[RMDB]
RNA sequence: GGGAACGACUCGAGUAGAGUCGAAAAGGGAGUAAAAGCUGCCAGCGAUGUUUUUAAGUUGGACUGUCCGGAGCUGCCUGGACAUGGCUGUAAGUCUUGUGAAUUUCACAGGAAUAACACUGGAAUGAAAGAACUAUUGUGCUCGCUUUGCUAUAUGGGUUUUCAUUCCAUUCGUGGAAUGAAAACCAAAAGAAACAACAACAACAAC
Reactivity to 2A3 in 0.01 (KOAc 150mM, MgCl2 10mM, bicine 150mM(pH8.5), 24C), signal-to-noise 2, nucleotides 027 to 156: g020g000g000a060g040u090a060a040a070a020g000c040u050g040c060c040a000g030c020g060a040u100g050u090u140u030u030u220a110a050g010u010u030g040g030a090c070u040g000u040c020c020g050g000a020g060c100u090g070c010c000u040g000g030a020c040a090u130g050g000c000u010g040u110a230a000g040u020c000u000u020g010u020g060a140a240u060u220u210c020a020c000a000g020g070a030a070u130a140a030c060a010c050u080g050g070a030a040u090g070a150a150a000g030a000a030c020u040a090u090u150g070u030g010c040u000c020g050c000u050u100u070g020c030u030a030u040a160u300g090